[RMDB]
RNA sequence: GGGAACGACUCGAGUAGAGUCGAAAAGAUAUGGAAGGUACGGUAUACAGCGAGGAUCUACGAUCGGAAACGAUCGUAGGGAGCUGGUAUUACCUUCCUAAGUCAAACUGAUGCUUCGGCAUCAGAACGUUUAUUGUUUCUUCGGAAACAAUAAACGAAAAGAAACAACAACAACAAC
Reactivity to DMS in 0.01 (KOAc 150mM, MgCl2 10mM, bicine 150mM(pH8.5), 24C), signal-to-noise 4, nucleotides 027 to 126: g000a030u000a020u010g010g010a030a020g020g020u000a030c260g020g010u020a170u010a300c000a000g000c000g010a070g030g010a000u000c000u000a010c000g000a000u000c000g020g000a010a000a030c010g010a010u000c000g000u000a000g000g000g000a010g010c000u000g010g020u010a050u000u000a010c010c000u000u000c000c000u010a000a080g000u000c000a140a120a270c030u010g000a010u000g010c000u010u010c230g050g010c000a010u000c000a000g000a090a130
Reactivity to 2A3 in 0.01 (KOAc 150mM, MgCl2 10mM, bicine 150mM(pH8.5), 24C), signal-to-noise 4, nucleotides 027 to 126: g000a000u010a000u050g000g010a000a000g020g000u030a010c090g040g140u290a300u100a300c040a000g000c030g070a300g040g010a000u000c010u000a010c000g000a000u000c000g000g000a010a010a000c000g000a000u000c000g010u000a000g000g000g000a000g000c010u010g000g000u040a180u050u110a010c000c000u000u000c010c000u000a000a000g000u000c000a020a050a100c000u010g000a010u010g000c030u050u080c300g150g000c000a010u000c000a000g020a120a010